RNA sequence: GGGAACGACUCGAGUAGAGUCGAAAAGUGUUAAUAUUCCAACAUUUCUGUCAACCCCACAGUUUACUGCUAGUCAGGUUACAGACACAACAAGAAUUGCCCGUGCUAGAAUUCAUGUUGAAAGGGCUAUCGAAGGUUGUUUCGACAACCUUCGAUAAAAAGAAACAACAACAACAAC
Reactivity to 2A3 in 0.01 (KOAc 150mM, MgCl2 10mM, bicine 150mM(pH8.5), 24C), signal-to-noise 2, nucleotides 027 to 126: g030u030g040u160u150a100a080u040a160u220u090c050c000a010a010c000a100u120u190u000c010u000g100u020c100a000a100c040c000c050c000a040c000a030g050u080u180u170a220c100u190g000c000u000a100g000u170c040a050g000g000u030u030a020c000a000g040a040c070a000c010a000a200c020a020a000g080a180a050u090u080g010c080c090c000g020u070g030c020u110a020g050a080a020u140u100c080a100u160g000u110u000g140a120a070a060g000g000g050c000
Reactivity to DMS in 0.01 (KOAc 150mM, MgCl2 10mM, bicine 150mM(pH8.5), 24C), signal-to-noise 2, nucleotides 027 to 126: g000u010g000u010u030a070a080u030a090u030u000c080c040a070a100c070a050u000u000u000c010u000g050u010c180a070a050c000c000c000c240a170c110a030g000u010u000u030a030c060u010g010c030u000a080g020u000c160a040g010g000u040u010a020c040a040g000a150c220a190c090a100a080c100a190a040g000a030a010u050u030g000c030c010c030g000u030g000c090u040a120g000a020a060u030u010c080a090u010g000u000u030g000a020a050a090g000g000g020c050
Record summary
Conditions: 150 mM KOAc, 10 mM MgCl2 and 150 mM bicine (pH 8.5), 24 C. An RNA of 177 nucleotides, treated with 2A3 and DMS and read out base by base.